Record summary: The data come from the RNA Mapping Database (RMDB), library OK3TST. An RNA of 207 nucleotides, treated with 2A3 and read out base by base. The reactions ran in a buffer of 150 mM KOAc, 10 mM MgCl2 and 150 mM bicine (pH 8.5), at 24 C. Values cover nucleotides 27 to 156.
[RMDB]
RNA sequence: GGGAACGACUCGAGUAGAGUCGAAAAUUCUGCUAAUUGAGUAGAAAAUGAAUCUGACUGUACCCUUUUUGCAAAUUUCUCCUCUUGGUAUAAUUACAAUAAGGUCAGGUGAGAAUGCUUUACUGAAGUCUAACGUUCAGUGGGACAGGUUUGAAGACUCGUAAAAUGCUUUCGAGCAUUUUACGAGAAAAGAAACAACAACAACAAC
Reactivity to 2A3 in 0.01 (KOAc 150mM, MgCl2 10mM, bicine 150mM(pH8.5), 24C), signal-to-noise 1, nucleotides 027 to 156: u050u000c010u000g000c000u040a010a190u220u220g120a010g010u040a010g030a060a020a050a050u150g030a010a070u000c000u010g030a000c030u060g000u300a250c000c000c010u040u110u000u080u110g040c040a100a150a200u010u100u000c060u000c030c000u120c030u060u040g020g010u060a060u130a180a000u120u120a190c090a140a100u160a190a020g030g030u030c060a010g090g000u010g000a010g000a000a000u010g020c000u010u080u100a030c010u010g060a010a000g060u110c030u300a300a000c030g060u010u010c010a040g000u100g000g010g000a010c010a010g000g080u000u040u060g030a010a000g040a000